[RMDB]
An RNA of 207 nucleotides, treated with 2A3 and read out base by base. It was measured as part of the RMDB library M2RFOK. Reactivities are given for positions 27 through 156. The RNA was probed in 150 mM KOAc, 10 mM MgCl2 and 150 mM bicine (pH 8.5) at 24 C.
RNA sequence: GGGAACGACUCGAGUAGAGUCGAAAAGAUUUAAACAGAUGGAGAUACACAAAUGUUUGAAUCCCAGUAACAAAAAUCCUGGUAUCUCGGGUAUACAGCAGUGCAGAUACUGUAUUUUUAAUGCUCCUUAGGUUUUCCAUCUUCGGAUGGAAAACAAACUACAUCUCCAGUUCGCUGGAGAUGUAGUAAAAGAAACAACAACAACAAC
Reactivity to 2A3 in 0.01 (KOAc 150mM, MgCl2 10mM, bicine 150mM(pH8.5), 24C), signal-to-noise 1, nucleotides 027 to 156: g000a000u000u010u010a040a020a000c020a020g030a040u050g010g000a030g000a030u020a010c000a010c000a030a040a060u020g010u000u000u000g020a010a010u000c020c000c010a110g130u210a210a020c120a050a120a000a000a070u030c000c000u000g000g000u010a000u020c030u000c030g000g000g000u020a040u020a030c060a000g040c050a040g060u050g170c040a040g060a160u130a150c000u000g060u020a050u000u110u000u050u180a150a220u090g000c030u100c090c030u040u100a050g000g120u030u000u000u000c000c000a000u000c000u010u090c120g050g020a010u010g000g000a000a000a000a000c000a010a010